Background: The record gives the reactivity of an RNA of 177 nucleotides to DMS and 2A3. For DMS the reverse transcriptase was MarathonRT. The DMS profile rests on 8,538 reads.

RNA sequence: GGGAACGACUCGAGUAGAGUCGAAAAUUUUGUGUGGUUUGCUAUAUUUCUACUUAUAGAUGGCUAAAAUCUGAGUUUGAGAGCAGCAUGCCACAGAUGCUUGGAUUUUACUAUUGGAUUUUGCUGCCUUUUGUUAUAAGUUCGCUUAUAACAAAAGAAAAGAAACAACAACAACAAC
Reactivity to DMS in 0.01 (KOAc 150mM, MgCl2 10mM, bicine 150mM(pH8.5), 24C), signal-to-noise 5, nucleotides 027 to 126: u010u010u010u010g010u000g030u000g000g010u000u000u000g000c010u000a050u010a130u000u010u000c000u000a020c020u000u000a120u010a050g010a020u000g010g020c230u010a080a070a100a030u000c000u000g010a020g010u000u000u000g000a030g010a030g010c140a030g010c010a010u000g010c000c000a020c020a070g000a040u000g010c130u000u010g000g000a050u000u000u000u000a060c050u000a100u010u000g010g000a100u000u000u010u000g010c050u000g000c100
Reactivity to 2A3 in 0.01 (KOAc 150mM, MgCl2 10mM, bicine 150mM(pH8.5), 24C), signal-to-noise 3, nucleotides 027 to 126: u050u060u070u070g120u000g010u010g010g000u030u010u020g000c000u030a040u010a060u300u030u020c010u010a030c000u090u040a110u110a300g010a010u020g100g000c160u150a130a060a000a020u030c010u000g020a010g010u030u300u160g020a010g000a000g010c020a000g000c010a000u020g000c000c000a010c010a000g070a010u070g020c030u060u070g090g030a110u130u040u090u080a120c040u040a090u060u140g100g010a080u030u140u070u090g020c050u060g020c000